[RMDB]
RNA sequence: GGGAACGACUCGAGUAGAGUCGAAAAAGGAUUAAGUGGAGGUGUGAUCUCUUCACUUUUUCAAUUUAAAGUGAGAUUCAACUCCUCCAACUUAACCCGAAAAGAACUGUGACUUCGGUCACAGUUCGAGCAUUCACUAGUUCGCUAGUGAAUGCUCAAAAGAAACAACAACAACAAC
Reactivity to 2A3 in 0.01 (KOAc 150mM, MgCl2 10mM, bicine 150mM(pH8.5), 24C), signal-to-noise 2, nucleotides 027 to 126: a020g030g000a060u030u010a010a000g000u010g000g010a020g020g000u020g010u030g020a020u010c040u020c000u240u120c030a000c000u020u010u000u000u030c040a050a040u110u110u190a000a010a000g000u000g000a010g000a000u030u060c060a180a150c040u000c000c000u000c000c000a000a000c000u000u000a010a000c020c000c000g010a080a070a020a070g010a000a000c000u000g000u000g000a010c010u020u080c290g060g000u010c010a000c000a000g000u000u000c000
Reactivity to DMS in 0.01 (KOAc 150mM, MgCl2 10mM, bicine 150mM(pH8.5), 24C), signal-to-noise 1, nucleotides 027 to 126: a080g000g010a010u000u000a000a000g010u010g000g000a010g000g030u000g000u000g000a070u010c140u000c040u020u000c060a020c010u000u000u000u000u020c160a120a160u020u000u000a000a010a010g010u000g010a040g000a030u000u000c080a120a070c040u000c020c000u000c010c010a060a050c010u020u000a000a020c010c000c010g010a070a060a080a140g000a010a010c000u000g010u000g000a020c000u000u020c160g000g010u000c000a000c000a000g000u000u000c000
Source: RMDB library RFMREP, as collected in RNAgym.
Structure probing data (2A3 and DMS) for a 177-nucleotide construct.
For DMS the reverse transcriptase was MarathonRT.
The 2A3 profile rests on 2,484 reads.
2A3 adducts were read by reverse transcription with SuperScript II with manganese.
The reactions ran in a buffer of 150 mM KOAc, 10 mM MgCl2 and 150 mM bicine (pH 8.5), at 24 C.